[RMDB]
RNA sequence: GGGAACGACUCGAGUAGAGUCGAAAAGAAUCACCGUACCUAUUAAGGUUUACGCUCCAAGAUCGGUGGAUAGCAGCCCUAUCAAUAUCUAGGAGAACUGUGCUAUGUUUAGAAGAUUAGGUAGUCUAUUACACAGCCAUGUUCGCAUGGCUGUGAAACCUCUGCAGUAGUUCGCUACUGCAGAGGUAAAAGAAACAACAACAACAAC
Reactivity to DMS in 0.01 (KOAc 150mM, MgCl2 10mM, bicine 150mM(pH8.5), 24C), signal-to-noise 1, nucleotides 027 to 156: g000a140a100u010c010a080c030c030g000u010a100c030c000u020a160u000u010a110a040g040g050u000u010u000a120c010g030c020u000c010c030a140a110g030a030u000c030g010g010u000g000g000a130u030a120g010c060a260g010c060c040c000u000a210u000c010a070a200u000a120u000c080u000a140g030g000a070g020a020a060c080u000g010u010g010c050u010a080u020g000u000u010u010a090g000a110a090g000a070u030u000a010g060g030u000a140g000u010c000u000a110u000u000a180c000a000c000a000g000c000c030a000u010g000u000u010c300g010c010a030u000g020g070c000u030g010u000g010a000a070
Reactivity to 2A3 in 0.01 (KOAc 150mM, MgCl2 10mM, bicine 150mM(pH8.5), 24C), signal-to-noise 2, nucleotides 027 to 156: g160a000a040u150c030a010c020c010g030u020a020c010c010u150a230u300u180a200a030g010g040u000u050u020a050c010g000c000u000c000c010a050a000g020a030u050c030g010g050u000g080g000a020u090a040g110c120a000g010c010c030c000u040a070u050c060a090a070u040a020u160c000u010a030g000g060a020g020a020a060c060u120g080u050g080c030u080a030u090g050u050u060u080a140g040a230a010g010a090u150u050a080g060g000u040a080g050u000c030u060a150u070u160a060c000a000c010a010g000c000c010a020u040g050u130u050c120g010c140a000u010g000g080c000u000g000u000g000a000a000